[RMDB]
RNA sequence: GGGAACGACUCGAGUAGAGUCGAAAAGGAGUGCUACCGAAAGGUAGCACUCCAACAAAUCGGUGUAAGUCUAGCCGGUCUUACACCGUGCGGCACAGCGGAAACGCUGAUGUCGUAUACAAGGCUAGACCGGUAUAAAUUUCGAUUUAUACCGGUCAAAAGAAACAACAACAACAAC
Reactivity to DMS in 0.01 (KOAc 150mM, MgCl2 10mM, bicine 150mM(pH8.5), 24C), signal-to-noise 3, nucleotides 027 to 126: g000g020a040g040u000g010c000u000a010c000c000g000a110a120a160g020g000u000a000g010c000a000c000u000c000c000a030a030c090a060a070a050u000c000g010g010u000g010u010a000a010g000u000c040u010a050g010c010c010g010g000u000c010u000u010a000c020a020c000c000g010u000g000c000g010g010c000a010c010a000g020c000g000g000a120a110a180c000g020c000u000g000a050u010g020u000c000g040u000a040u000a100c230a060a100g010g000c010u010a060
Reactivity to 2A3 in 0.01 (KOAc 150mM, MgCl2 10mM, bicine 150mM(pH8.5), 24C), signal-to-noise 3, nucleotides 027 to 126: g000g000a000g000u000g010c010u000a010c000c000g070a070a080a060g030g000u010a000g000c000a000c000u000c000c000a000a000c000a000a010a010u090c000g010g000u000g000u010a000a010g010u000c020u020a000g010c020c010g300g140u020c010u010u000a000c000a000c000c000g000u010g000c010g010g000c010a000c000a010g000c000g000g030a050a060a020c010g000c000u000g010a010u010g000u010c000g010u000a000u000a000c020a020a160g000g000c000u010a050
This 177-nucleotide RNA was probed chemically with DMS and 2A3.
The 2A3 profile rests on 12,175 reads.
2A3 adducts were read by reverse transcription with SuperScript II with manganese.
For DMS, 5,355 sequencing reads were counted.